Chemical mapping of a 177-nucleotide RNA with DMS and 2A3.
DMS adducts were read by reverse transcription with MarathonRT.
Reactivities are given for positions 27 through 126.
RNA sequence: GGGAACGACUCGAGUAGAGUCGAAAAGCUGCCUCUGACGUCCUUCUCCCCCGGAAACGGGGCCGAAGGGUGGUAAGGCGUGUCGCCUGGCGCUAGCACGGGUAUGCGUGGUGGUCGACCCUGGCCGGAUCGGGUAGGUGUUCGCACCUACCCGAUCAAAAGAAACAACAACAACAAC
Reactivity to DMS in 0.01 (KOAc 150mM, MgCl2 10mM, bicine 150mM(pH8.5), 24C), signal-to-noise 1, nucleotides 027 to 126: g000c030u000g010c010c000u010c060u000g000a110c110g000u010c010c000u000u000c000u000c300c000c000c020c010g000g000a050a070a180c000g000g000g000g020c040c040g000a000a000g010g000g010u010g010g000u000a130a020g000g010c020g010u000g020u000c080g000c020c020u010g000g000c030g000c050u000a080g010c020a030c050g010g010g010u000a030u020g010c050g000u000g000g000u020g000g010u010c030g020a120c000c000c070u000g000g000c060c090g030
Reactivity to 2A3 in 0.01 (KOAc 150mM, MgCl2 10mM, bicine 150mM(pH8.5), 24C), signal-to-noise 1, nucleotides 027 to 126: g070c040u030g040c030c000u000c300u300g130a020c020g040u010c010c010u010u000c000u040c000c020c000c000c010g020g020a000a010a000c000g000g000g010g050c010c010g000a000a000g020g000g010u000g030g030u050a040a020g000g000c060g040u010g020u040c040g000c020c000u010g040g040c020g000c050u090a040g030c030a030c080g140g010g050u220a130u270g110c010g000u040g040g110u000g000g050u040c010g040a200c020c110c040u010g040g000c070c020g070